[RMDB]
RNA sequence: GGGAACGACUCGAGUAGAGUCGAAAAGAGGCAUCGUGACCCUAUCACAUCUAGUUAAUUGUGAGAGAAUCUUAUGUCUCUGUUUCAUAAGAUUGAUUGGACAAUUUCUCACCGGUGUAAAGAGUGGUCCUAAGGGAAUCAUCGAAAGUGAAUUGUGGAUAGUAUUUCUCUUCGGAGAAAUACUAUCAAAAGAAACAACAACAACAAC
Reactivity to DMS in 0.01 (KOAc 150mM, MgCl2 10mM, bicine 150mM(pH8.5), 24C), signal-to-noise 5, nucleotides 027 to 156: g020a080g030g020c010a050u000c050g030u000g010a110c000c000c010u020a120u000c040a020c010a070u000c070u010a230g010u010u000a050a080u010u000g040u000g000a070g020a100g030a050a030u000c010u000u000a020u010g020u000c050u020c070u000g010u000u000u000c030a090u010a060a080g000a090u000u000g010a170u000u000g010g000a070c030a040a090u000u000u010c020u000c020a080c060c020g020g020u010g020u010a080a070a120g000a100g020u000g010g020u000c000c030u010a100a110g030g020g010a090a090u000c030a040u000c020g010a100a080a120g020u000g000a080a120u010u000g020u010g020
Reactivity to 2A3 in 0.01 (KOAc 150mM, MgCl2 10mM, bicine 150mM(pH8.5), 24C), signal-to-noise 7, nucleotides 027 to 156: g040a000g030g010c010a020u040c070g070u070g050a050c000c010c020u030a040u060c020a020c000a040u030c050u110a050g140u190u150a170a140u130u080g000u000g000a030g000a000g010a050a030u010c010u020u030a010u020g030u000c010u020c040u130g120u070u110u040c040a050u040a060a030g010a050u020u070g050a080u050u140g050g010a020c030a060a100u010u130u010c040u010c020a050c040c030g040g010u050g030u090a060a110a000g080a030g030u080g020g010u030c000c010u040a030a040g040g000g000a040a040u050c010a010u050c040g040a080a080a040g080u070g050a060a080u080u070g040u050g080